[RMDB]
RNA sequence: GGGAACGACUCGAGUAGAGUCGAAAAGACGUGGAGGUUGCGCGCCCUCCUUUGCGCGUAAGUACGUCGAAAUUCGGUGCUUAGGAUCGCACCGUUUGAUCCAUUUGAUAUCCGCUUAGUGCCGCGGUUGGGCAUUUACACUUACCCGAAAGGGGAAACGUAUGGUAAUAUUCGUAUUACCAUACGUAAAAGAAACAACAACAACAAC
Reactivity to 2A3 in 0.01 (KOAc 150mM, MgCl2 10mM, bicine 150mM(pH8.5), 24C), signal-to-noise 5, nucleotides 027 to 156: g000a000c010g010u050g000g150a090g050g160u060u050g010c000g000c000g000c020c020c000u220c010c040u090u080u090g010c010g000c000g000u010a050a010g070u050a000c000g000u000c020g010a090a010a000u050u020c010g010g000u020g010c030u110u200a170g070g080a090u140c050g000c000a000c010c000g000u010u000u020g030a030u020c010c020a080u090u060u130g160a100u080a090u090c010c020g000c050u060u120a030g030u030g050c020c020g040c060g070g000u130u080g000g010g000c000a020u040u050u100a030c090a010c020u090u140a050c000c000c000g040a060a030a010g010g000g010g000a050a100
Reactivity to DMS in 0.01 (KOAc 150mM, MgCl2 10mM, bicine 150mM(pH8.5), 24C), signal-to-noise 3, nucleotides 027 to 156: g000a070c040g010u000g030g020a100g010g010u000u010g030c010g030c020g020c030c110c080u010c080c050u010u000u000g030c010g050c040g040u000a040a050g030u000a050c020g000u000c030g020a070a090a090u010u000c000g020g000u000g020c010u000u010a200g030g010a120u010c200g000c010a080c020c020g020u000u020u010g010a180u010c030c040a220u000u010u000g000a130u010a120u000c030c030g010c040u010u000a090g030u000g020c000c030g000c020g010g020u000u000g000g030g020c050a110u000u000u000a090c110a040c080u010u000a230c010c020c010g010a090a120a190g010g000g000g000a050a060

Notes
This 207-nucleotide RNA was probed chemically with 2A3 and DMS. For 2A3, 4,896 sequencing reads were counted. 2A3 adducts were read by reverse transcription with SuperScript II with manganese. DMS adducts were read by reverse transcription with MarathonRT. It was measured as part of the RMDB library OK3TST. Conditions: 150 mM KOAc, 10 mM MgCl2 and 150 mM bicine (pH 8.5), 24 C.